[RMDB]
RNA sequence: GGGAACGACUCGAGUAGAGUCGAAAACGAGACGCUGGCGCAGGCGCGGGAGCAACUGCGGUUGGAGAUGGCGGCGGCGCGAGGUGUCGCGCUCGCGGCGAUCGCGGCCGGGGAGUUCGAGAAGACCGUCGCCGAGAAGCUCGGCAUCGACCGGAUGGACUUUGAUCAGAUUCGUCUGAUCAAAGUCAAAAGAAACAACAACAACAAC
Reactivity to 2A3 in 0.01 (KOAc 150mM, MgCl2 10mM, bicine 150mM(pH8.5), 24C), signal-to-noise 2, nucleotides 027 to 156: c020g030a020g120a070c090g010c030u050g040g000c040g000c090a030g000g000c020g000c020g020g040g000a060g030c050a000a170c020u280g130c140g040g030u020u020g100g000a250g000a030u030g190g000c090g020g040c000g030g000c000g010c010g000a040g120g150u280g130u130c000g000c020g000c050u150c010g000c020g010g010c020g050a000u010c000g010c030g050g000c000c000g000g000g030g020a040g000u040u000c000g000a050g040a220a000g020a020c000c000g060u140c000g000c000c000g070a020g050a050a000g000c040u120c080g000g040c030a050u050c010g070a040c000c010g000g050a120u150g050